[RMDB]
RNA sequence: GGGAACGACUCGAGUAGAGUCGAAAAACAAAUUGGGAGAAUGUAUCCUUUUUGAGAUGUAGCGAUUGCCAAAAUCGGCAACAUUACAAAAGCAGUGAUUACACCAAUUUCUAAACAUUUUUUCAACGGCUAAUACGCGAUUCGUCGCGUAUUAGCCAAAAGAAACAACAACAACAAC
Reactivity to 2A3 in 0.01 (KOAc 150mM, MgCl2 10mM, bicine 150mM(pH8.5), 24C), signal-to-noise 2, nucleotides 027 to 126: a000c050a050a070a000u050u000g000g060g050a090g130a280a140u150g000u120a000u020c000c000u000u000u000u000u000g130a080g000a000u000g000u000a030g100c070g070a100u010u130g060c230c100a170a090a000a120u050c040g080g000c020a000a040c000a000u000u070a020c000a020a040a000a010g110c000a080g010u060g300a040u120u020a000c040a010c000c000a000a010u040u130u020c140u180a070a240a180c140a230u150u100u000u000u000u000c030a070a050c050
Chemical mapping of a 177-nucleotide RNA with 2A3. The reactions ran in a buffer of 150 mM KOAc, 10 mM MgCl2 and 150 mM bicine (pH 8.5), at 24 C. The 2A3 profile rests on 471 reads. It was measured as part of the RMDB library OK1LIB. For 2A3 the reverse transcriptase was SuperScript II with manganese. Reactivities are given for positions 27 through 126.